[RMDB]
RNA sequence: GGGAACGACUCGAGUAGAGUCGAAAAGAUAUGGAGUGGUAGGAGAGUUGAGUCGGAAACGACUCAACGCUCGCGAAACUACUCACUCCUAAGUCAAAAGUCGUUUAUUGUUCGCAAUAAACGACAACGACCCUAUAUGGUUCGCCAUAUAGGGUCGAAAAGAAACAACAACAACAAC
Reactivity to 2A3 in 0.01 (KOAc 150mM, MgCl2 10mM, bicine 150mM(pH8.5), 24C), signal-to-noise 1, nucleotides 027 to 126: g030a010u060a070u120g000g010a010g010u000g030g000u030a040g110g130a100g010a000g030u020u040g000a020g000u020c020g000g020a040a040a070c010g000a010c010u030c000a010a010c000g000c000u000c000g060c120g070a130a020a010c010u030a010c040u060c160a020c010u000c010c000u040a190a050g080u040c040a030a000a000a250g020u010c000g000u000u000u000a000u000u020g070u010u070c300g020c130a000a000u000a000a030a000c020g010a000c000a010a000
Reactivity to DMS in 0.01 (KOAc 150mM, MgCl2 10mM, bicine 150mM(pH8.5), 24C), signal-to-noise 2, nucleotides 027 to 126: g030a110u020a300u000g000g000a010g100u000g030g010u010a000g100g000a050g010a030g000u000u010g000a000g000u010c000g000g000a110a080a170c000g000a020c000u000c010a000a000c020g000c010u020c000g020c170g010a130a170a300c030u000a010c000u010c020a010c000u010c010c030u000a040a110g000u010c060a090a060a070a200g010u010c020g010u000u000u000a010u000u000g000u000u020c180g020c010a070a010u000a000a010a000c000g000a010c020a040a070